[RMDB]
This 207-nucleotide RNA was probed chemically with DMS and 2A3. Conditions: 150 mM KOAc, 10 mM MgCl2 and 150 mM bicine (pH 8.5), 24 C.
RNA sequence: GGGAACGACUCGAGUAGAGUCGAAAAGUCCCCAGUAUGACGUUAAACUGCUGACUCAUACAUACUGACACCGGUUGCUCAACAGGCUGUGUGCGACAAUAGAAUAACAAGGCUGUCAAUUUGAGCUAAAACUCCUCGGGGUUCGCCCCGAGGAGAAGCUAUAGAUGAUGUUCGCAUCAUCUAUAGCAAAAGAAACAACAACAACAAC
Reactivity to DMS in 0.01 (KOAc 150mM, MgCl2 10mM, bicine 150mM(pH8.5), 24C), signal-to-noise 2, nucleotides 027 to 156: g000u000c010c010c000c060a070g000u000a000u000g000a040c040g030u000u020a040a050a060c050u000g010c010u010g000a150c040u000c030a060u020a090c100a100u000a120c050u000g000a080c010a060c030c040g000g020u010u000g020c030u000c050a090a090c080a100g030g010c050u000g020u010g030u000g020c020g010a060c050a050a080u000a150g000a130a210u010a120a100c070a100a140g000g020c050u000g000u000c000a080a140u000u000u010g010a040g000c020u010a050a060a130a110c020u000c000c000u010c020g000g010g040g050u010u000c300g020c000c000c020c000g010a010g030g040a000g000a000a050
Reactivity to 2A3 in 0.01 (KOAc 150mM, MgCl2 10mM, bicine 150mM(pH8.5), 24C), signal-to-noise 5, nucleotides 027 to 156: g010u020c010c000c010c000a000g000u020a000u100g010a020c050g020u020u040a040a100a050c030u080g020c020u030g020a030c010u020c040a030u080a190c010a030u100a060c050u090g050a040c010a030c050c030g120g000u030u070g000c010u010c030a060a110c020a110g160g000c050u070g030u020g000u020g140c020g040a020c020a050a080u120a140g150a100a060u120a120a020c040a090a020g070g000c060u020g050u080c020a030a060u030u040u090g020a010g000c020u060a020a060a080a120c000u000c000c000u000c000g000g010g000g010u040u030c120g080c010c000c000c000g010a000g000g000a000g000a000a000

The 2A3 profile rests on 4,312 reads. The DMS profile rests on 2,991 reads.